The record gives the reactivity of an RNA of 177 nucleotides to 2A3 and DMS.
The reactions ran in a buffer of 150 mM KOAc, 10 mM MgCl2 and 150 mM bicine (pH 8.5), at 24 C.
The data come from the RNA Mapping Database (RMDB), library OK2TRN.
[RMDB]
RNA sequence: GGGAACGACUCGAGUAGAGUCGAAAAGAUCGUACCUGCAGGAUCGACAGUCCAUGUCAUGCCAUGCUAGUCGUACGACACUCAUGCUAUAGUGCUACUAGUGUCAUGACACAUCUAGUACCAUGUCUGGCAGAUUUAGUUUCGACUAAAUCUGCCAAAAAGAAACAACAACAACAAC
Reactivity to 2A3 in 0.01 (KOAc 150mM, MgCl2 10mM, bicine 150mM(pH8.5), 24C), signal-to-noise 2, nucleotides 027 to 126: g080a200u020c000g010u020a020c000c040u040g060c030a000g000g000a070u080c120g010a020c020a020g010u020c070c040a210u060g010u000c000a030u160g080c040c010a110u040g020c070u080a020g020u040c080g040u020a010c000g050a010c000a060c010u100c060a110u200g000c040u190a040u110a300g020u050g020c010u000a010c010u000a000g010u020g020u020c080a130u140g060a080c020a000c000a090u080c030u030a010g010u000a020c000c010a020u100g040u050c060
Reactivity to DMS in 0.01 (KOAc 150mM, MgCl2 10mM, bicine 150mM(pH8.5), 24C), signal-to-noise 3, nucleotides 027 to 126: g000a120u000c010g010u010a020c050c030u010g000c040a070g020g000a060u000c150g000a030c050a060g000u010c240c220a120u010g000u020c000a070u020g060c050c060a140u020g010c020u010a020g010u010c150g010u000a030c060g020a010c100a080c040u020c100a090u000g000c100u000a190u020a090g010u010g000c180u000a030c010u000a090g010u000g010u010c130a090u030g010a180c120a030c090a110u010c030u000a020g000u000a060c130c060a030u010g010u020c200